[RMDB]
RNA sequence: GGGAACGACUCGAGUAGAGUCGAAAAGGUGGUCUGCGCGUGUGGCUCGGCGGCUGCGGCGCCGUAUAGACCGCGUGUUCGACGGGCUGGUUCCUGGCGGCGGCUAGGAGCAUGGCUGUUAGCCUAGUGAAUAGUGAGGGUUCGCCCUCACUAUUCAAAAAGAAACAACAACAACAAC
Reactivity to 2A3 in 0.01 (KOAc 150mM, MgCl2 10mM, bicine 150mM(pH8.5), 24C), signal-to-noise 1, nucleotides 027 to 126: g090g020u070g040g020u000c020u030g000c020g020c030g070u070g040u110g010g020c010u010c050g110g000c080g040g020c050u040g000c010g070g010c040g010c010c000g040u080a170u070a170g010a020c000c000g000c020g000u050g020u000u110c040g040a030c030g010g050g000c000u040g070g030u000u020c000c020u010g020g000c020g050g000c030g050g000c020u020a030g030g000a030g060c090a110u100g020g000c030u040g060u140u090a020g010c000c000u030a090g140
Reactivity to DMS in 0.01 (KOAc 150mM, MgCl2 10mM, bicine 150mM(pH8.5), 24C), signal-to-noise 3, nucleotides 027 to 126: g010g020u000g000g020u010c020u000g010c050g010c030g020u010g030u010g010g000c060u010c090g000g010c090g000g000c020u000g000c080g020g010c040g010c030c160g020u000a080u010a090g000a170c010c020g010c010g000u000g010u000u000c200g010a050c030g010g000g020c010u000g020g000u010u000c010c000u000g010g010c030g000g020c150g000g000c030u010a030g010g000a070g000c050a070u010g020g010c020u010g000u000u010a120g020c020c000u000a110g020
Chemical mapping of a 177-nucleotide RNA with 2A3 and DMS. Conditions: 150 mM KOAc, 10 mM MgCl2 and 150 mM bicine (pH 8.5), 24 C. For DMS the reverse transcriptase was MarathonRT. 2A3 adducts were read by reverse transcription with SuperScript II with manganese. Values are in units of 0.01, from 0 to 300, in steps of 10. The 2A3 profile rests on 1,866 reads. It was measured as part of the RMDB library OK2TST.